[RMDB]
RNA sequence: GGGAACGACUCGAGUAGAGUCGAAAAUCCACUAUGAAUCUAGUCACUAAAUAAACACAAUUAGCUACUGUGUGUAAUAGUGAGUGUUGAUAACACAAAAUAAUAGUAUAGUUUUGGAAGACUAUACGCGCCCUUGCUCCGUUCGCGGAGCAAGGAAGCCUCACAUCAAGUUCGCUUGAUGUGAGGCAAAAGAAACAACAACAACAAC
Reactivity to 2A3 in 0.01 (KOAc 150mM, MgCl2 10mM, bicine 150mM(pH8.5), 24C), signal-to-noise 4, nucleotides 027 to 156: u010c030c000a040c080u200a210u270g110a150a060u070c110u130a080g100u030c010a010c020u000a020a000a060u050a020a050a000c000a010c010a030a120u170u090a070g100c070u150a020c050u020g000u000g010u000g000u040a010a040u010a030g000u000g000a020g010u020g030u030u030g110a170u230a270a040c030a020c040a020a080a080a060u210a100a070u090a090g000u010a000u000a010g010u000u000u090u130g150g050a130a030g000a030c000u000a000u010a000c000g010c020g020c000c000c000u000u000g030c000u000c000c000g030u020u040c020g010c030g090g000a010g000c000a000a000g000g000a000a010
Reactivity to DMS in 0.01 (KOAc 150mM, MgCl2 10mM, bicine 150mM(pH8.5), 24C), signal-to-noise 1, nucleotides 027 to 156: u000c000c000a190c100u000a140u000g030a190a080u020c020u000a100g020u000c000a040c010u000a020a010a080u000a170a290a020c000a000c010a080a050u000u010a260g020c190u010a020c080u000g050u000g000u000g020u000a030a280u000a010g020u000g010a090g040u000g010u030u010g000a090u000a000a160c060a120c000a050a110a070a060u000a020a300u000a050g010u000a010u000a010g020u000u000u010u000g000g000a300a250g000a020c000u000a030u000a010c000g020c080g000c110c000c000u000u000g040c040u000c000c000g000u000u020c290g020c060g030g010a020g060c010a000a000g000g000a040a110

This 207-nucleotide RNA was probed chemically with 2A3 and DMS. For 2A3 the reverse transcriptase was SuperScript II with manganese. The RNA was probed in 150 mM KOAc, 10 mM MgCl2 and 150 mM bicine (pH 8.5) at 24 C. It was measured as part of the RMDB library M2RFPK.